[RMDB]
Structure probing data (DMS and 2A3) for a 177-nucleotide construct. It was measured as part of the RMDB library OK2TST. The RNA was probed in 150 mM KOAc, 10 mM MgCl2 and 150 mM bicine (pH 8.5) at 24 C.
RNA sequence: GGGAACGACUCGAGUAGAGUCGAAAACUAGUGCCUAGAACAGUGCCUGGCACAGGCAAUUUAUUAAACUAAAGUGAACCAAUAGCAUUACCUCUUCCUUACUUCCAAGUUAAUGUGCAAAGGCAGAUGUUGAGUUGUGAUUCGUCACAACUCAACAAAAAGAAACAACAACAACAAC
Reactivity to DMS in 0.01 (KOAc 150mM, MgCl2 10mM, bicine 150mM(pH8.5), 24C), signal-to-noise 1, nucleotides 027 to 126: c040u010a080g020u020g000c010c010u000a190g010a100a120c130a080g000u000g000c030c010u000g000g000c040a030c040a130g010g010c040a010a040u010u010u000a050u030u020a070a100a120c100u000a040a040a170g000u000g020a090a090c070c080a100a070u010a110g000c050a010u000u000a030c090c010u000c030u030u000c020c020u000u010a020c100u020u010c020c050a110a090g000u000u000a100a110u020g010u000g010c030a080a050a050g000g030c050a020g000a170
Reactivity to 2A3 in 0.01 (KOAc 150mM, MgCl2 10mM, bicine 150mM(pH8.5), 24C), signal-to-noise 1, nucleotides 027 to 126: c000u030a020g060u000g020c040c040u060a010g050a190a030c030a080g110u030g100c020c010u020g050g010c020a000c010a040g000g000c010a020a010u130u110u150a090u040u160a150a160a070c080u040a070a040a070g070u060g090a090a010c000c010a030a050u050a060g090c030a000u020u110a080c000c010u080c060u090u000c010c000u020u010a070c010u090u030c000c000a080a000g000u030u030a120a010u070g030u020g000c000a100a000a000g050g100c040a000g000a110
Description
2A3 adducts were read by reverse transcription with SuperScript II with manganese. The 2A3 profile rests on 831 reads. For DMS, 869 sequencing reads were counted.